[RMDB]
RNA sequence: GGGAACGACUCGAGUAGAGUCGAAAACCAGUCAGUUUGUGAUUAGCGAGAGGGUCAACUGAUUUCAUGAUGAUUGACUGGAACUAUGAAACAGGAAGAGACCCGUAGAUCUGGGUUCAAAUCCCAGCCGCACAAGGACAUUCGUGUCCUUGUGCGGAAAAGAAACAACAACAACAAC
Reactivity to DMS in 0.01 (KOAc 150mM, MgCl2 10mM, bicine 150mM(pH8.5), 24C), signal-to-noise 1, nucleotides 027 to 126: c000c010a100g000u030c010a080g020u010u000u010g040u000g020a070u010u010a040g010c030g000a220g000a110g020g010g030u000c000a180a110c040u000g000a080u000u000u000c060a030u000g040a100u000g010a110u010u010g000a050c040u000g000g000a110a050c030u010a020u000g000a010a030a030c080a040g010g040a100a070g000a240g000a000c000c000c010g040u070a090g010a090u010c050u000g010g000g000u010u020c230a050a300a130u010c000c000c010a050g010
Notes: Chemical mapping of a 177-nucleotide RNA with DMS. For DMS, 648 sequencing reads were counted. DMS adducts were read by reverse transcription with MarathonRT. The RNA was probed in 150 mM KOAc, 10 mM MgCl2 and 150 mM bicine (pH 8.5) at 24 C.